[RMDB]
RNA sequence: GGGAACGACUCGAGUAGAGUCGAAAAUUCCCAAGAAACAAAAAGAAAAGGACCACUGGACAGGGGUACUGCCUUUUCGGGGCAGCUGUCCGGUCAAGGCCAUACGGACAGCCGGGUCCACUGCCGACGACACGUUGCAGUUCGCUGCAGCGUGUCGAAAAGAAACAACAACAACAAC
Reactivity to DMS in 0.01 (KOAc 150mM, MgCl2 10mM, bicine 150mM(pH8.5), 24C), signal-to-noise 2, nucleotides 027 to 126: u000u000c000c000c010a140a020g010a110a090a090c150a060a090a030a130a110g000a200a040a100a170g000g010a020c040c000a120c010u000g000g000a000c000a010g000g000g000g010u060a300c040u000g000c000c000u000u010u040u040c160g000g000g030g020c000a030g010c000u000g000u000c010c000g000g010u000c170a060a060g000g020c000c010a020u000a120c050g000g020a000c000a130g000c000c000g000g000g000u000c000c000a080c100u010g000c000c000g010a300
Reactivity to 2A3 in 0.01 (KOAc 150mM, MgCl2 10mM, bicine 150mM(pH8.5), 24C), signal-to-noise 2, nucleotides 027 to 126: u010u000c000c000c000a000a030g050a000a130a020c140a010a040a050a000a010g200a040a070a000a000g010g000a000c000c000a010c010u000g010g010a000c000a000g030g010g020g020u060a120c000u000g010c000c010u030u060u120u120c090g020g000g000g000c000a020g010c000u000g000u000c000c000g010g000u020c020a000a020g000g000c000c000a020u050a030c000g010g010a000c000a010g000c000c000g000g000g000u000c000c000a000c000u020g000c000c000g020a050